Notes:
Chemical mapping of a 177-nucleotide RNA with 2A3 and DMS. 2A3 adducts were read by reverse transcription with SuperScript II with manganese. The 2A3 profile rests on 1,453 reads. The data come from the RNA Mapping Database (RMDB), library OK1LIB. For DMS the reverse transcriptase was MarathonRT.
RNA sequence: GGGAACGACUCGAGUAGAGUCGAAAAGAAAAGACGAUGUUAUUAUGAUUCUCGAGUAAUAGCAGGUCAAGCGUACUACUCGCCGAACGGAAGGCCGACUGUUCGCGAAAUGAAACGAGAAAGAAAACGUGACGUAUCGUUUCGACGAUACGUCACGAAAAGAAACAACAACAACAAC
Reactivity to 2A3 in 0.01 (KOAc 150mM, MgCl2 10mM, bicine 150mM(pH8.5), 24C), signal-to-noise 2, nucleotides 027 to 126: g090a030a110a010a030g030a000c050g000a130u000g000u000u020a050u000u010a020u050g030a130u070u000c000u000c000g010a010g010u000a050a020u020a000g000c030a020g110g000u000c070a080a000g030c020g010u040a030c020u010a070c020u110c000g000c050c000g030a100a020c080g000g000a130a000g200g000c000c020g080a030c010u020g000u000u040c040g000c070g070a040a060a130u270g010a050a030a080c070g000a000g010a030a020a030g190a050a060a010a000
Reactivity to DMS in 0.01 (KOAc 150mM, MgCl2 10mM, bicine 150mM(pH8.5), 24C), signal-to-noise 1, nucleotides 027 to 126: g000a140a100a140a120g020a060c010g000a150u000g030u040u000a070u000u000a090u000g000a070u000u040c000u010c050g010a290g000u040a090a010u000a000g040c010a020g050g000u110c000a010a070g040c060g010u000a050c040u010a070c000u000c000g000c170c010g010a010a000c000g000g020a070a180g010g010c030c040g050a150c050u010g000u000u000c090g000c040g000a050a100a110u010g000a000a020a120c080g010a130g030a020a090a110g140a000a060a090a090